[RMDB]
RNA sequence: GGGAACGACUCGAGUAGAGUCGAAAAAUCGAGCUGUUUGUCGACCGGGCACGCCGAGUGCGGUCGGAUUUUGCGAUUAAUGCCGAUACCGCGGUGACGGUCGGGGAAAUCUGCCGACGCUUGGACGCGGUAGCGUGAGAUUCGUCUCACGCUACCGAAAAGAAACAACAACAACAAC
Reactivity to DMS in 0.01 (KOAc 150mM, MgCl2 10mM, bicine 150mM(pH8.5), 24C), signal-to-noise 5, nucleotides 027 to 126: a090u000c020g000a120g030c020u000g000u000u000u000g020u000c010g000a040c010c010g000g000g010c070a090c030g010c100c040g010a100g020u010g010c060g010g000u000c020g010g000a060u010u010u000u010g010c190g010a120u010u010a060a080u010g010c000c010g010a090u000a050c040c030g000c010g010g020u010g020a080c050g000g000u000c010g010g000g000g000a030a040a050u010c100u000g010c010c020g010a040c070g000c080u020u000g000g010a180c170g000
Reactivity to 2A3 in 0.01 (KOAc 150mM, MgCl2 10mM, bicine 150mM(pH8.5), 24C), signal-to-noise 5, nucleotides 027 to 126: a000u060c030g010a030g020c030u030g120u140u070u100g300u090c010g010a020c010c000g040g090g130c070a020c050g050c040c040g110a080g060u190g020c050g010g020u060c030g000g010a040u080u080u080u170g090c100g040a040u010u250a140a060u260g150c010c000g010a020u050a130c020c010g000c010g060g020u030g020a030c020g000g000u010c010g000g000g000g000a040a080a020u030c060u050g010c020c010g030a060c020g010c070u060u100g070g030a040c060g000